[RMDB]
RNA sequence: GGGAACGACUCGAGUAGAGUCGAAAAGAUAUGGAUCGUCAUUAGGGAGCUGAAUGUCGGAAACGACAUACAGCUUUGAUCUAAGACGAUCCUAAGUCAAACAGCCCAGGCUUCGGCCUGGGCUGAAGAUCAAACUACUGUUCGCAGUAGUUUGAUCAAAAGAAACAACAACAACAAC
Reactivity to DMS in 0.01 (KOAc 150mM, MgCl2 10mM, bicine 150mM(pH8.5), 24C), signal-to-noise 2, nucleotides 027 to 126: g000a030u000a240u020g000g000a000u000c000g000u010c000a120u000u010a000g010g020g030a050g030c010u010g010a190a010u010g000u000c010g000g010a020a050a090c000g010a020c000a000u000a070c010a020g000c000u000u000u010g000a140u010c000u000a000a000g000a010c010g000a000u000c000c000u000a000a110g000u000c010a190a150a300c020a020g010c000c000c000a030g000g010c010u000u040c270g020g010c000c000u000g000g000g030c000u000g000a010a060
Reactivity to 2A3 in 0.01 (KOAc 150mM, MgCl2 10mM, bicine 150mM(pH8.5), 24C), signal-to-noise 2, nucleotides 027 to 126: g000a000u040a000u080g000g000a000u000c000g070u010c040a200u040u070a030g060g100g300a030g070c000u010g050a090a000u010g000u010c020g000g010a050a030a030c000g000a000c000a000u010a030c010a000g010c000u050u010u080g020a030u000c000u000a000a000g010a000c030g000a000u000c000c010u000a000a000g020u030c010a100a100a260c020a010g000c000c000c000a010g040g000c000u180u300c300g230g000c010c010u060g000g000g000c020u000g000a000a020